[RMDB]
RNA sequence: GGGAACGACUCGAGUAGAGUCGAAAAGAAAGUCGAGGUCAUAAUAGACGAUGGAAGCCGGUCGUACUAUUAUGUACGAGGCGAAACAUGAGACUGAGGAGUGAGAGCGAUUCGGUCGAUCGACGAAGGGUUUACUAAAGUUCGCUUUAGUAAACCCAAAAGAAACAACAACAACAAC
Reactivity to DMS in 0.01 (KOAc 150mM, MgCl2 10mM, bicine 150mM(pH8.5), 24C), signal-to-noise 7, nucleotides 027 to 126: g000a060a130a130g000u000c010g000a060g000g020u000c000a060u000a110a080u030a170g000a030c000g020a020u010g020g000a080a260g010c030c010g000g040u010c010g010u000a010c010u000a110u010u020a040u030g010u020a020c000g010a160g020g000c000g000a060a060a300c040a040u000g000a170g010a030c010u010g020a030g010g000a300g010u010g000a120g000a160g000c010g000a300u060u000c010g010g020u010c000g000a080u000c010g000a020c010g010a090a130

An RNA of 177 nucleotides, treated with DMS and read out base by base. For DMS the reverse transcriptase was MarathonRT. Conditions: 150 mM KOAc, 10 mM MgCl2 and 150 mM bicine (pH 8.5), 24 C. The DMS profile rests on 15,530 reads.